The record gives the reactivity of an RNA of 177 nucleotides to 2A3.
The data come from the RNA Mapping Database (RMDB), library OK1LIB.
RNA sequence: GGGAACGACUCGAGUAGAGUCGAAAACGCGCGGGCGAUCGGGCCCACAAUCUCCUCGCCGGAGGCGGAGACCACCACGACGUCACGUCCACACAGUUUGUGGCCGGCUAUGAGGUCUGCGGCUUCGGCUCGCUGCCUGGUUCGCCAGGCAGCGAGCAAAAGAAACAACAACAACAAC
Reactivity to 2A3 in 0.01 (KOAc 150mM, MgCl2 10mM, bicine 150mM(pH8.5), 24C), signal-to-noise 1, nucleotides 027 to 126: c030g090c000g000c170g030g200g010c000g040a150u090c040g060g240g000c000c000c000a000c000a000a030u030c020u050c020c000u070c090g030c000c010g000g000a000g020g000c000g000g040a020g000a020c010c030a040c060c050a020c170g090a010c020g060u030c100a040c040g040u000c050c000a060c010a000c010a060g200u150u290u000g000u100g000g000c000c000g000g000c060u120a170u100g060a170g000g000u030c000u010g050c010g000g040c000u010u000c000g000